[RMDB]
Conditions: 150 mM KOAc, 10 mM MgCl2 and 150 mM bicine (pH 8.5), 24 C. The record gives the reactivity of an RNA of 177 nucleotides to DMS. For DMS the reverse transcriptase was MarathonRT.
RNA sequence: GGGAACGACUCGAGUAGAGUCGAAAAAUUGGUGGUCGGGCUAAGGCAGAGUUGGAUACGCGCUUGAUGGAGGUACAACAAGCACUUUUAGCCGAUUUGGAUCAUCAGCGUGAACGUUUACAUAAGGAUAUCUGAUUGGCUUCGGCCAAUCAGAUAUAAAAGAAACAACAACAACAAC
Reactivity to DMS in 0.01 (KOAc 150mM, MgCl2 10mM, bicine 150mM(pH8.5), 24C), signal-to-noise 2, nucleotides 027 to 126: a140u000u010g030g040u010g000g000u000c030g040g000g010c000u000a010a050g000g010c040a090g000a270g010u000u000g000g000a120u020a030c060g010c010g030c080u000u020g000a120u010g020g000a140g020g010u010a040c030a030a020c110a130a200g010c060a100c110u000u000u020u010a070g000c010c000g010a140u000u000u000g000g000a070u000c010a010u000c020a040g020c110g020u010g020a110a070c150g020u000u000u000a110c100a070u010a080a120g030g040